[RMDB]
Structure probing data (2A3) for a 207-nucleotide construct. The data come from the RNA Mapping Database (RMDB), library OK3TST. For 2A3 the reverse transcriptase was SuperScript II with manganese. Reactivities are rounded to 0.1 and cut off at 0 and 3. The 2A3 profile rests on 459 reads.
RNA sequence: GGGAACGACUCGAGUAGAGUCGAAAACAGGUGCAUGCUGCUCUGGGAAACUGAAAAAACAUAUUCGAGUAGGGAUGUCCAACAAUUACUAUCCGCUUUAGAGACACGUACUCAAAUUUAAACUAUCCAAGAACCUAUAAAUGUCCUGGGUCACCGAUCAGGCAAUAGUCUUCGGACUAUUGCCUGAAAAAGAAACAACAACAACAAC
Reactivity to 2A3 in 0.01 (KOAc 150mM, MgCl2 10mM, bicine 150mM(pH8.5), 24C), signal-to-noise 1, nucleotides 027 to 156: c060a030g010g000u130g020c050a060u040g000c020u020g030c000u030c060u110g000g040g000a050a080a150c120u100g000a070a060a020a000a000a000c090a100u190a050u120u100c030g000a030g020u000a020g090g150g030a100u010g030u000c000c000a060a000c030a070a120u280u160a040c060u020a110u100c100c050g010c090u080u170u080a070g030a010g000a000c010a010c020g040u070a010c070u010c040a070a070a070u040u100u000a140a050a010c000u050a050u060c020c010a000a060g000a090a110c020c000u050a060u080a270a220a020u100g000u000c000c000u000g000g050g010u110c020a000c220c000g020a110